[RMDB]
RNA sequence: GGGAACGACUCGAGUAGAGUCGAAAAGAUAUGGACGAUCCCAAGGGAGCUCCACAUCGGAAACGAUGUGAGAGCUUUGAUCUUGGAUCGUCCUAAGUCAAAAUCACCGUAGGUUCGCCUACGGUGACCUCUUAGACGGGUUCGCCCGUCUAAGAGGAAAAGAAACAACAACAACAAC
Reactivity to DMS in 0.01 (KOAc 150mM, MgCl2 10mM, bicine 150mM(pH8.5), 24C), signal-to-noise 1, nucleotides 027 to 126: g000a040u010a230u020g010g000a010c000g000a000u000c200c060c050a010a010g010g000g020a030g040c000u000c000c010a000c000a000u010c000g000g000a080a120a100c010g000a010u000g000u000g000a140g000a010g010c010u010u000u020g000a050u020c000u000u000g000g000a030u000c000g010u000c000c000u000a010a070g000u020c030a100a140a120a190u000c000a010c010c000g000u000a000g000g010u000u010c290g010c020c020u000a000c000g000g000u000g000a010
Reactivity to 2A3 in 0.01 (KOAc 150mM, MgCl2 10mM, bicine 150mM(pH8.5), 24C), signal-to-noise 1, nucleotides 027 to 126: g020a020u040a020u050g000g000a000c030g020a000u120c150c150c110a000a000g120g040g050a110g030c020u010c000c000a000c030a000u000c010g030g010a060a020a040c040g000a000u020g010u030g010a170g000a000g000c010u020u040u050g010a010u010c030u010u020g000g000a000u000c000g010u010c010c000u000a010a010g030u000c010a000a000a000a300u080c010a000c000c000g010u000a010g060g080u020u070c300g150c090c000u000a000c000g000g010u010g010a010